[RMDB]
RNA sequence: GGGAACGACUCGAGUAGAGUCGAAAAGGAAAUAGGUAUGCGGUCGCUAUUAAAAUAUUGCGACAAACUGGCACACAGCAAGCGAGUCGUGACGAGUGCACACAAGUCGUUCCCAGCCAGAAAAAAACAUCCGUAGUAGAUUCGUCUACUACGGAUGAAAAGAAACAACAACAACAAC
Reactivity to DMS in 0.01 (KOAc 150mM, MgCl2 10mM, bicine 150mM(pH8.5), 24C), signal-to-noise 2, nucleotides 027 to 126: g010g010a030a090a100u010a100g000g030u010a070u000g000c130g040g010u000c020g010c010u000a050u000u010a060a180a070a110u010a100u000u000g000c000g020a010c020a020a080a120c080u000g010g020c020a120c020a080c080a070g010c040a050a030g010c010g020a070g010u000c020g000u000g020a100c030g020a070g000u010g040c080a050c030a110c070a100a030g020u000c000g000u010u000c000c000c000a130g000c090c100a070g020a010a010a020a030a010a060a140
Reactivity to 2A3 in 0.01 (KOAc 150mM, MgCl2 10mM, bicine 150mM(pH8.5), 24C), signal-to-noise 1, nucleotides 027 to 126: g050g030a040a070a040u160a060g040g100u140a080u150g100c100g080g030u020c010g000c010u030a040u080u160a150a080a060a040u290a030u040u150g020c000g000a030c020a030a020a010c020u030g030g060c020a030c000a000c020a010g080c010a140a000g050c000g020a000g060u010c010g010u000g000a000c020g020a020g100u050g000c040a000c010a000c010a040a010g000u010c000g000u010u030c000c000c000a020g010c010c010a050g000a070a080a000a000a000a000a020